RNA sequence: GGGAACGACUCGAGUAGAGUCGAAAAGAAGUGGCAGGGACAUGCCCCAGAAGCUCGUUCUAGCAACAUAUGUUUGGCUAGUUCGAGCGAUUAGUCUUGAGGAGCGUCCUCUCGCCUCUUGACGAGACAUUUAGGGCCCAUUCGUGGGCCCUAAAUGAAAAGAAACAACAACAACAAC
Reactivity to DMS in 0.01 (KOAc 150mM, MgCl2 10mM, bicine 150mM(pH8.5), 24C), signal-to-noise 2, nucleotides 027 to 126: g010a030a030g010u000g010g030c030a060g000g000g000a040c060a070u050g020c010c000c020c030a030g000a110a190g000c000u020c000g000u000u000c000u000a000g040c000a080a030c080a220u010a130u040g010u000u000u030g000g040c000u000a010g000u000u000c010g000a010g010c010g000a010u040u050a100g030u010c020u050u000g010a170g010g000a220g010c070g040u000c000c000u060c050u040c180g000c000c000u020c010u000u000g010a100c090g020a150g010a140
Reactivity to 2A3 in 0.01 (KOAc 150mM, MgCl2 10mM, bicine 150mM(pH8.5), 24C), signal-to-noise 3, nucleotides 027 to 126: g110a060a000g000u040g030g000c010a010g000g090g000a040c050a060u280g030c000c000c000c000a030g030a080a000g000c010u000c000g000u000u000c010u000a000g000c010a020a040c060a100u270a090u280g160u100u120u100g180g030c000u000a000g020u000u010c000g000a000g000c000g000a000u000u050a020g070u010c040u030u110g020a220g020g010a160g030c030g010u020c000c000u030c010u010c050g020c020c000u010c000u030u000g020a030c050g050a030g000a010